[RMDB]
RNA sequence: GGGAACGACUCGAGUAGAGUCGAAAAGCGUACUACCGUACAAAGGGCUUGGAUUUACAGGAGAACUACUCGUAUCCCAAAUAGGAUACGAGCUCCUGUUGUCAGCCUUUCAAAGCGGUAUCGCAAACUGUCGAGAUUCCUUCGGGAAUCUCGACAGCAUAGCUCGAGGGUUCGCCCUCGAGCUAUGAAAAGAAACAACAACAACAAC
Reactivity to 2A3 in 0.01 (KOAc 150mM, MgCl2 10mM, bicine 150mM(pH8.5), 24C), signal-to-noise 1, nucleotides 027 to 156: g000c000g010u030a050c050u000a000c020c020g000u090a050c090a080a040a010g030g010g000c020u150u210g170g000a020u300u290u180a000c000a000g070g030a010g020a100a020c070u210a050c000u300c000g000u000a000u000c000c050c000a160a300a210u300a120g010g000a010u000a000c000g000a000g020c000u000c000c000u000g000u020u000g000u000c000a000g000c000c000u000u020u010c060a050a040a020g020c000g020g010u040a040u300c000g000c000a040a100a060c000u020g010u000c000g000a000g000a000u000u020c040c000u100u120c300g040g000g000a000a000u020c000u010c000g000a000c000a000g030
Source: RMDB library RNAMAK, as collected in RNAgym.
Structure probing data (2A3) for a 207-nucleotide construct.